This 177-nucleotide RNA was probed chemically with 2A3 and DMS. Values are in units of 0.01, from 0 to 300, in steps of 10. For 2A3, 1,379 sequencing reads were counted. Source: RMDB libraries RFM100 and RFMREP, as collected in RNAgym. Conditions: 150 mM KOAc, 10 mM MgCl2 and 150 mM bicine (pH 8.5), 24 C.
RNA sequence: GGGAACGACUCGAGUAGAGUCGAAAAAGGAACCUUAAAGUUAAUCGUUCCCUGUCUCUCCGCAGAACCUACUGGACAAAACAGGACAGUAAGUGGACAAAAACCUACAAAUCAGCGAUUUGUAGGUUUUUGCACACUUGUUCGCAAGUGUGCAAAAAAAAGAAACAACAACAACAAC
Reactivity to 2A3 in 0.01 (KOAc 150mM, MgCl2 10mM, bicine 150mM(pH8.5), 24C), signal-to-noise 1, nucleotides 027 to 126: a000g120g010a040a030c030c030u070u090a230a140a040g110u120u160a130a040u120c020g000u000u000c010c000c020u020g080u000c030u000c000u000c020c020g010c050a050g040a100a040c000c000u000a020c020u020g000g040a050c030a050a150a040a040c100a060g080g000a010c000a010g000u020a160a040g000u020g030g020a010c080a010a130a010a010a010c000c010u020a000c010a000a000a010u030c080a050g140c050g090a000u020u000u000g000u000a000g010g000u000
Reactivity to DMS in 0.01 (KOAc 150mM, MgCl2 10mM, bicine 150mM(pH8.5), 24C), signal-to-noise 9, nucleotides 027 to 126: a080g010g010a060a060c020c050u010u030a060a110a160g010u020u020a080a120u010c090g010u000u000c000c000c010u010g000u010c040u000c040u010c030c050g030c100a090g010a130a080c060c050u000a050c020u000g000g000a110c050a070a090a110a140c250a110g000g000a110c100a020g000u010a030a050g010u010g000g000a080c180a040a040a030a030a020c000c000u000a000c000a000a000a000u000c010a150g020c230g000a050u000u000u000g010u000a000g000g000u000